[RMDB]
About this RNA
The data come from the RNA Mapping Database (RMDB), library M2PK50. An RNA of 177 nucleotides, treated with DMS and 2A3 and read out base by base.

RNA sequence: GGGAACGACUCGAGUAGAGUCGAAAACCCUGGUUAUUCGUAACCAGGGGUUGAGUGAAUCCUCUCAGUGCAUCGGUGGAUCACACGAAACGCAUCGACGACAAUUACGGUUAUUCGUAACCGUAAACGAAUAUAGGUGCUUCGGCACCUAUAUUCGAAAAGAAACAACAACAACAAC
Reactivity to DMS in 0.01 (KOAc 150mM, MgCl2 10mM, bicine 150mM(pH8.5), 24C), signal-to-noise 3, nucleotides 027 to 126: c000c000c000u000g020g010u000u000a010u000u010c170g020u000a010a000c010c010a000g000g010g010g010u010u000g000a150g000u000g010a140a080u010c020c010u000c060u010c080a110g010u010g030c100a060u000c040g020g010u000g000g030a110u010c070a060c060a130c100g000a050a050a080c110g000c050a050u000c070g010a060c090g000a080c090a060a190u000u000a000c000g000g000u000u000a030u010u010c160g030u000a000a010c010c000g010u000a000a010a110
Reactivity to 2A3 in 0.01 (KOAc 150mM, MgCl2 10mM, bicine 150mM(pH8.5), 24C), signal-to-noise 2, nucleotides 027 to 126: c000c000c010u000g000g000u030u030a020u090u050c190g020u020a000a000c000c000a000g020g000g000g000u050u120g060a070g030u060g060a030a090u010c000c020u030c020u000c050a070g060u070g120c030a120u040c070g000g040u040g020g040a040u110c020a030c010a010c090g070a120a060a010c070g000c050a050u080c040g090a110c030g020a030c060a080a090u040u000a010c010g000g000u000u000a000u000u090c190g030u020a010a010c010c010g000u020a010a000a000